About this RNA
This 177-nucleotide RNA was probed chemically with 2A3 and DMS. Reactivities are rounded to 0.1 and cut off at 0 and 3. The reactions ran in a buffer of 150 mM KOAc, 10 mM MgCl2 and 150 mM bicine (pH 8.5), at 24 C. High 2A3 reactivity points to a flexible backbone, as in loops and unpaired stretches. DMS adducts were read by reverse transcription with MarathonRT. The 2A3 profile rests on 1,467 reads. Reactivities are given for positions 27 through 126.
[RMDB]
RNA sequence: GGGAACGACUCGAGUAGAGUCGAAAACUGGUGGCGUGGAACGCCGAGCAGAGCGGGCACACGCAGGUCCCAUUCCGGAUCGUCGGCGCGCACACCGACAGCCCCAAUCUGCGGGUCAAGCAGCAUCGCUGCGACAAUCGUUCGCGAUUGUCGCAGCAAAAGAAACAACAACAACAAC
Reactivity to 2A3 in 0.01 (KOAc 150mM, MgCl2 10mM, bicine 150mM(pH8.5), 24C), signal-to-noise 1, nucleotides 027 to 126: c060u070g050g010u080g000g000c010g000u030g020g130a290a070c030g020c000c010g010a020g060c010a030g020a010g060c010g000g070g000c080a030c000a010c110g040c020a060g010g000u050c010c020c000a030u230u060c040c040g030g110a100u090c030g020u010c030g050g090c000g060c000g080c050a150c010a010c020c000g020a010c000a010g050c030c000c000c000a000a100u040c010u060g000c000g030g050g090u100c030a010a020g020c020a000g000c020a060u090c120
Reactivity to DMS in 0.01 (KOAc 150mM, MgCl2 10mM, bicine 150mM(pH8.5), 24C), signal-to-noise 1, nucleotides 027 to 126: c100u000g000g020u010g010g030c030g000u010g030g020a170a130c030g020c010c000g010a060g060c070a030g000a070g000c060g000g000g000c150a060c070a040c080g050c090a100g000g000u000c010c010c030a130u000u040c070c140g000g040a190u000c030g000u010c020g000g010c020g070c140g010c040a080c050a020c030c030g010a030c030a040g010c050c000c020c040a070a120u030c020u030g010c060g000g000g000u000c190a080a160g000c030a010g000c300a040u000c130